[RMDB]
RNA sequence: GGGAACGACUCGAGUAGAGUCGAAAAGACUGCGUGCACUAGAGACGAUAUCGAGCCGGAAAUUAAUCGAUAAUGUCUCCAGUAGUGGAUACGAUCCGGCAAGUAUCGACUACAUGUGCUCGUAGGAACGAGCCUAGCCUUUCGAGGCUAGGCUCGUAAAAGAAACAACAACAACAAC
Reactivity to 2A3 in 0.01 (KOAc 150mM, MgCl2 10mM, bicine 150mM(pH8.5), 24C), signal-to-noise 1, nucleotides 027 to 126: g090a000c000u000g020c000g010u010g000c020a000c000u030a000g020a000g010a010c000g000a000u000a000u140c020g010a010g000c030c000g010g080a030a130a040u220u290a040a230u060c080g020a030u010a100a110u130g000u010c010u030c010c000a020g030u060a070g020u120g050g000a000u000a000c010g000a000u020c000c000g000g000c000a050a020g000u000a000u000c020g040a000c000u100a020c000a020u020g000u000g000c000u000c000g000u000a000g050g010a010
Source: RMDB library OK1LIB, as collected in RNAgym. The record gives the reactivity of an RNA of 177 nucleotides to 2A3. The 2A3 profile rests on 1,002 reads. Conditions: 150 mM KOAc, 10 mM MgCl2 and 150 mM bicine (pH 8.5), 24 C. Reactivities are given for positions 27 through 126.